[RMDB]
RNA sequence: GGGAACGACUCGAGUAGAGUCGAAAAGAACAGGUAGCCACCGACCUGGGAUUGGCCUUCACCGAACCGGCAAGCGUGCUGGCCUGACGUCAAUCCCGCCCGGCCAGUAACCAGUAACUUGUCCGUAGUUUUAGGACUGGUUCGCCAGUCCUAAAACAAAAGAAACAACAACAACAAC
Reactivity to DMS in 0.01 (KOAc 150mM, MgCl2 10mM, bicine 150mM(pH8.5), 24C), signal-to-noise 3, nucleotides 027 to 126: g010a210a210c030a020g000g030u000a060g010c040c040a080c090c020g000a080c050c020u010g020g000g000a200u000u000g020g000c010c070u010u010c100a090c090c050g000a100a090c100c040g010g000c020a040a050g000c060g010u000g000c020u000g000g010c030c020u000g000a050c300g010u000c000a040a070u000c100c080c000g030c030c030c050g010g010c020c020a030g020u000a050a100c100c130a090g030u010a130a110c050u000u000g000u000c010c030g000u020a110
Reactivity to 2A3 in 0.01 (KOAc 150mM, MgCl2 10mM, bicine 150mM(pH8.5), 24C), signal-to-noise 1, nucleotides 027 to 126: g070a060a010c020a030g040g000u020a010g080c060c020a040c050c030g040a070c000c030u040g000g050g000a020u000u020g060g040c000c020u090u050c070a060c090c060g020a060a020c020c040g020g010c030a000a000g110c080g030u090g000c000u000g000g000c000c010u020g010a000c040g000u070c040a070a090u080c000c000c010g000c000c000c000g040g000c020c000a010g000u010a010a120c050c010a010g070u060a040a060c030u040u060g100u070c000c000g030u170a140
An RNA of 177 nucleotides, treated with DMS and 2A3 and read out base by base. For 2A3, 1,467 sequencing reads were counted. Conditions: 150 mM KOAc, 10 mM MgCl2 and 150 mM bicine (pH 8.5), 24 C. Source: RMDB library OK2TST, as collected in RNAgym.